[RMDB]
RNA sequence: GGGAACGACUCGAGUAGAGUCGAAAACGCCUAAUCUUCGGAUUAGGCGAAAAGAGGACGUGGAGCAGGCUUCAAAGGAAACGACGAUCACUCCCGAACAGAAAAGACUGGAGUUCGCUCCAGUCAAGUAUAAGCCUUGGUUCGCCAAGGCUUAUACAAAAGAAACAACAACAACAAC
Reactivity to DMS in 0.01 (KOAc 150mM, MgCl2 10mM, bicine 150mM(pH8.5), 24C), signal-to-noise 2, nucleotides 027 to 126: c010g030c020c010u000a010a000u000c010u010u020c190g020g000a010u000u010a010g020g010c010g000a010a010a080a120g020a080g000g000a080c050g020u010g000g010a050g040c040a160g000g010c040u010u000c020a020a130a100g000g020a060a130a070c070g010a080c080g000a050u010c070a080c070u010c000c020c040g020a080a090c150a080g010a060a100a070a120g000a020c000u000g010g000a010g010u000u010c220g000c000u000c000c010a030g000u000c010a000a030
Reactivity to 2A3 in 0.01 (KOAc 150mM, MgCl2 10mM, bicine 150mM(pH8.5), 24C), signal-to-noise 2, nucleotides 027 to 126: c010g000c010c010u000a010a020u000c010u050u030c200g080g010a000u000u010a010g010g050c000g000a000a000a000a000g080a030g040g030a010c030g040u110g040g020a040g050c090a000g070g060c030u060u030c120a120a070a090g050g040a040a170a040c060g080a010c040g050a080u060c030a020c060u000c030c000c000g030a020a000c080a070g210a070a100a030a020g000a000c010u000g010g010a000g000u020u090c110g070c080u000c000c000a000g000u010c000a000a010
Overview: This 177-nucleotide RNA was probed chemically with DMS and 2A3. Values cover nucleotides 27 to 126. The DMS profile rests on 1,162 reads. The RNA was probed in 150 mM KOAc, 10 mM MgCl2 and 150 mM bicine (pH 8.5) at 24 C.